[RMDB]
RNA sequence: GGGAACGACUCGAGUAGAGUCGAAAAGCGCCGCACGGGCGCAGUGUUGUGCGAGACUCUAGGCCCGUGACAGAGUGGUAUCAGAGCAGACUUGCUUCACGUUACAAUACCUAGCCGACUAAACACGCUCUGAUUUAUUCUUCGGAAUAAAUCAGAGAAAAGAAACAACAACAACAAC
Reactivity to 2A3 in 0.01 (KOAc 150mM, MgCl2 10mM, bicine 150mM(pH8.5), 24C), signal-to-noise 2, nucleotides 027 to 126: g020c030g020c000c020g000c050a100c050g090g000g000c080g000c040a000g040u040g010u030u160g090u060g130c110g030a060g040a090c000u000c020u070a090g010g050c010c010c020g020u040g000a010c080a010g040a000g040u060g050g030u070a050u120c070a030g030a010g080c000a010g130a260c050u040u040g050c000u050u080c050a030c060g010u030u090a020c050a110a020u010a100c010c010u000a010g030c040c030g050a090c030u200a040a120a030c050a000c030g000
Reactivity to DMS in 0.01 (KOAc 150mM, MgCl2 10mM, bicine 150mM(pH8.5), 24C), signal-to-noise 3, nucleotides 027 to 126: g010c040g030c030c040g010c060a080c080g010g010g020c010g030c050a020g030u010g010u010u000g000u000g020c100g030a140g000a090c020u010c000u000a120g000g020c020c030c060g020u000g010a080c100a100g000a060g010u000g000g020u000a050u020c080a120g000a070g000c020a080g000a100c100u000u000g010c020u000u000c060a110c090g020u010u020a030c150a080a040u010a040c040c010u000a050g020c060c030g000a070c110u020a050a070a060c120a100c210g010